An RNA of 177 nucleotides, treated with DMS and 2A3 and read out base by base. The RNA was probed in 150 mM KOAc, 10 mM MgCl2 and 150 mM bicine (pH 8.5) at 24 C. 2A3 adducts were read by reverse transcription with SuperScript II with manganese.
[RMDB]
RNA sequence: GGGAACGACUCGAGUAGAGUCGAAAAUACGGAUCGAUCGCGAUCGAGCUCGGUACCGUCAUGCUAGGUACGUCGUGCGUACCAGGUACGAUCAGUACCACUAGUAGUACAGGAUCCGUACCGUACGACAAAUCUCAGUGUUCGCACUGAGAUUUGUAAAAGAAACAACAACAACAAC
Reactivity to DMS in 0.01 (KOAc 150mM, MgCl2 10mM, bicine 150mM(pH8.5), 24C), signal-to-noise 4, nucleotides 027 to 126: u000a030c090g010g000a060u000c010g030a060u000c140g020c060g020a080u000c060g000a090g010c170u020c080g000g010u000a070c030c090g040u000c110a110u010g010c060u010a070g010g000u000a020c040g000u020c220g020u000g010c010g020u010a020c050c040a300g020g010u000a020c020g010a040u010c050a080g000u000a010c000c030a150c170u000a090g020u010a100g010u000a010c110a170g020g000a020u000c060c050g020u000a030c020c000g010u000a050c190g000
Reactivity to 2A3 in 0.01 (KOAc 150mM, MgCl2 10mM, bicine 150mM(pH8.5), 24C), signal-to-noise 3, nucleotides 027 to 126: u120a020c010g040g020a000u010c010g020a030u080c100g010c040g150a100u080c070g010a030g000c040u090c140g000g030u080a140c030c020g030u060c040a050u180g010c030u080a080g050g000u030a020c010g030u050c100g070u140g170c000g000u010a030c000c030a010g030g000u010a000c020g000a050u080c050a010g000u010a000c020c000a030c040u050a030g120u070a030g020u020a020c040a110g090g120a010u030c030c000g000u000a030c000c010g020u040a050c020g010